[RMDB]
RNA sequence: GGGAACGACUCGAGUAGAGUCGAAAAGAUAUGGAAAGGUCGUCACUUUUGACGCGUUCUACUCGGAAACGAGUAAUACGCGAUAAGUGAACCUUUCCUAAGUCAAACUGUAACUUCGGUUACAGAACACUCCAGCUAAGUUCGCUUAGCUGGAGUGAAAAGAAACAACAACAACAAC
Reactivity to DMS in 0.01 (KOAc 150mM, MgCl2 10mM, bicine 150mM(pH8.5), 24C), signal-to-noise 2, nucleotides 027 to 126: g010a010u000a300u000g010g000a000a010a000g000g000u010c290g010u020c010a020c000u000u010u000u000g050a300c090g000c000g000u000u000c160u000a020c000u010c000g040g000a050a060a190c000g020a020g000u000a000a050u000a030c010g050c000g000a110u010a010a020g010u000g000a060a040c000c000u010u010u000c000c000u000a030a070g010u010c030a140a130a300c010u010g000u000a000a010c010u010u010c260g040g000u000u000a010c010a020g000a120a170
Reactivity to 2A3 in 0.01 (KOAc 150mM, MgCl2 10mM, bicine 150mM(pH8.5), 24C), signal-to-noise 2, nucleotides 027 to 126: g010a000u050a000u120g000g010a050a000a000g020g060u140c220g140u030c150a010c030u170u110u140u300g300a160c050g000c000g000u010u050c070u080a000c000u000c030g020g000a050a020a050c000g000a000g020u000a010a030u120a010c000g050c020g030a060u070a290a000g000u000g010a000a000c010c000u020u000u000c000c000u000a060a000g020u010c020a030a080a150c020u010g000u010a000a000c000u050u110c300g180g000u010u000a000c010a010g000a060a050
An RNA of 177 nucleotides, treated with DMS and 2A3 and read out base by base. For DMS the reverse transcriptase was MarathonRT. For DMS, 1,886 sequencing reads were counted.